[RMDB]
RNA sequence: GGGAACGACUCGAGUAGAGUCGAAAAGCAAAGGGGUUCGCCCCUUUGCAAAUUAACCGAUCAAAUAUAAGAAUAUAACGCGAAGAUCGGAAAAGAGCAAAAAAAGGUUCUACUUCGGUAGAACCAAGUCUAUACCUAACUUCGGUUAGGUAUAGACAAAAGAAACAACAACAACAAC
Reactivity to DMS in 0.01 (KOAc 150mM, MgCl2 10mM, bicine 150mM(pH8.5), 24C), signal-to-noise 2, nucleotides 027 to 126: g020c000a000a000a010g000g000g010g030u000u010c300g040c020c000c000c000u010u000u000g000c000a020a060a050u000u000a090a130c010c010g000a010u000c010a070a150a130u000a130u000a080a110g000a160a040u010a080u010a050a070c150g020c070g000a130a160g000a000u010c010g010g020a040a060a060a040g030a150g000c130a000a000a080a060a010a120a100g020g020u020u000c010u020a010c000u010u020c240g020g000u010a000g000a010a010c000c000a010a030
Reactivity to 2A3 in 0.01 (KOAc 150mM, MgCl2 10mM, bicine 150mM(pH8.5), 24C), signal-to-noise 2, nucleotides 027 to 126: g020c000a020a000a000g000g000g000g020u010u050c060g100c000c000c000c000u000u000u000g000c000a000a000a000u010u000a000a020c000c000g000a020u020c070a060a190a020u190a050u070a190a030g020a240a060u190a060u060a250a100c070g020c040g280a160a050g010a020u020c010g040g000a010a100a000a000g100a020g040c080a020a080a050a000a000a030a080g000g000u000u000c010u000a000c010u020u030c210g050g000u000a000g020a000a010c010c000a000a000
The record gives the reactivity of an RNA of 177 nucleotides to DMS and 2A3. 2A3 adducts were read by reverse transcription with SuperScript II with manganese. Reactivities are given for positions 27 through 126. DMS adducts were read by reverse transcription with MarathonRT. The reactions ran in a buffer of 150 mM KOAc, 10 mM MgCl2 and 150 mM bicine (pH 8.5), at 24 C. The 2A3 profile rests on 2,275 reads.